[RMDB]
Chemical mapping of a 177-nucleotide RNA with DMS and 2A3.
For DMS, 2,609 sequencing reads were counted.

RNA sequence: GGGAACGACUCGAGUAGAGUCGAAAAUCUGUAUUGCCAAUCACAUUGAUUAUGAGAAAUGGAAUAAUCACAAAAGAUACGCAUCAACUCGAUAUGUAUUUAGAGUGAUGGGACAAUUCCUUGGCUAUCACCUAGAUGUGUUCGCACAUCUAGGUGAAAAAGAAACAACAACAACAAC
Reactivity to DMS in 0.01 (KOAc 150mM, MgCl2 10mM, bicine 150mM(pH8.5), 24C), signal-to-noise 2, nucleotides 027 to 126: u000c040u000g010u010a050u010u000g060c040c010a040a130u000c020a040c090a060u020u010g000a120u000u040a010u020g000a120g000a040a190a060u100g010g000a100a020u000a090a030u000c000a040c020a000a100a190a000g010a000u000a010c000g020c040a000u000c020a160a050c280u070c200g000a000u000a040u000g000u000a020u000u000u000a030g010a300g000u000g050a010u000g000g010g010a060c060a010a090u000u000c000c040u000u000g000g000c000u000a190
Reactivity to 2A3 in 0.01 (KOAc 150mM, MgCl2 10mM, bicine 150mM(pH8.5), 24C), signal-to-noise 4, nucleotides 027 to 126: u020c010u020g220u190a110u000u220g000c010c030a000a030u060c020a040c020a090u080u190g030a050u070u290a010u080g100a090g130a110a090a020u150g060g040a040a060u090a070a010u010c020a040c030a070a130a000a000g020a000u030a010c020g030c070a000u000c020a030a300c110u050c200g040a010u010a010u080g080u040a050u050u080u030a150g000a000g040u000g020a000u010g000g110g020a070c100a020a040u040u030c030c000u040u030g010g030c000u020a010
Source: RMDB library OK1LIB, as collected in RNAgym.
Conditions: 150 mM KOAc, 10 mM MgCl2 and 150 mM bicine (pH 8.5), 24 C.